[RMDB]
RNA sequence: GGGAACGACUCGAGUAGAGUCGAAAAUCCCGCCGGGGGUGUGCACCCAGGGCAGCAUGCGCAGGAGCCAACGCGAGGUGAUGCCCUGCAUCUGCGGAGCGGACUUGGUCGUGGUUGCCAGGUUCCGGUGAGGGUUCUAUUUCGAUAGAACCCUCACAAAAGAAACAACAACAACAAC
Reactivity to 2A3 in 0.01 (KOAc 150mM, MgCl2 10mM, bicine 150mM(pH8.5), 24C), signal-to-noise 2, nucleotides 027 to 126: u000c000c000c000g000c010c030g000g020g030g010g040u050g050u060g040c070a100c020c030c010a030g010g000g000c000a030g000c000a010u150g010c010g020c070a100g000g180a090g090c040c000a080a070c050g000c020g070a030g120g040u020g010a060u040g000c000c000c000u020g000c010a030u010c000u100g100c000g020g020a040g050c030g000g000a020c000u010u010g000g020u070c130g050u100g070g040u110u070g010c010c000a010g000g000u100u100c000c000g010
Reactivity to DMS in 0.01 (KOAc 150mM, MgCl2 10mM, bicine 150mM(pH8.5), 24C), signal-to-noise 1, nucleotides 027 to 126: u010c000c000c000g040c000c020g000g010g000g060g000u010g000u050g030c050a040c200c150c020a040g000g000g060c000a020g000c040a020u040g010c060g010c070a080g000g030a090g070c130c110a110a080c120g000c020g000a050g000g010u000g000a110u020g010c070c050c050u020g000c000a060u010c030u020g000c010g010g010a060g010c000g010g000a080c000u010u010g010g040u050c030g000u000g020g000u000u000g000c000c020a070g000g000u000u020c000c070g000